Structure probing data (2A3 and DMS) for a 207-nucleotide construct. The 2A3 profile rests on 4,588 reads. For 2A3 the reverse transcriptase was SuperScript II with manganese. Conditions: 150 mM KOAc, 10 mM MgCl2 and 150 mM bicine (pH 8.5), 24 C. For DMS the reverse transcriptase was MarathonRT. The DMS profile rests on 5,948 reads. Reactivities are given for positions 27 through 156.
RNA sequence: GGGAACGACUCGAGUAGAGUCGAAAAUCGGCGAACUUCAGCGAGAGCCAGCUGCUGAUGGAGAUCUACGCCGAGGCGCUGCGCGGCACCGGUGCCGAGGUCACCACGAAGGGGCGGAUCGGCGCCCGCGAGGUCUACGUCAACGCGGUGCGGGACGACAGGUAAGAAGAUUCGUCUUCUUACCUGUAAAAGAAACAACAACAACAAC
Reactivity to 2A3 in 0.01 (KOAc 150mM, MgCl2 10mM, bicine 150mM(pH8.5), 24C), signal-to-noise 5, nucleotides 027 to 156: u060c020g020g000c020g020a050a060c040u090u060c040a050g000c010g040a070g010a020g120c020c020a040g020c030u070g000c010u020g020a020u020g020g040a030g010a030u040c020u100a130c040g040c100c060g020a070g010g000c030g000c020u060g010c170g020c020g150g020c040a060c100c040g100g030u060g010c020c030g020a030g030g030u090c040a080c100c010a060c100g110a140a170g000g000g000g010c040g030g050a180u140c020g010g000c010g000c000c000c010g000c010g000a010g010g000u020c020u040a050c000g010u020c020a070a060c080g000c010g040g040u060g020c050g000g040g010a020c060g010
Reactivity to DMS in 0.01 (KOAc 150mM, MgCl2 10mM, bicine 150mM(pH8.5), 24C), signal-to-noise 2, nucleotides 027 to 156: u000c030g000g020c010g000a110a090c050u010u010c040a110g020c110g020a140g040a150g040c040c070a100g010c050u020g070c030u000g000a070u000g000g010a050g000a070u000c030u000a090c010g000c040c040g040a160g040g010c000g000c020u000g020c040g000c040g030g010c010a060c000c050g030g040u000g000c010c020g010a070g040g020u000c060a080c010c010a110c080g040a180a190g010g040g000g030c020g000g010a080u000c030g020g030c000g000c000c010c020g000c020g000a070g010g010u000c000u000a040c030g020u000c020a040a050c050g000c010g020g000u000g000c040g010g000g000a120c030g010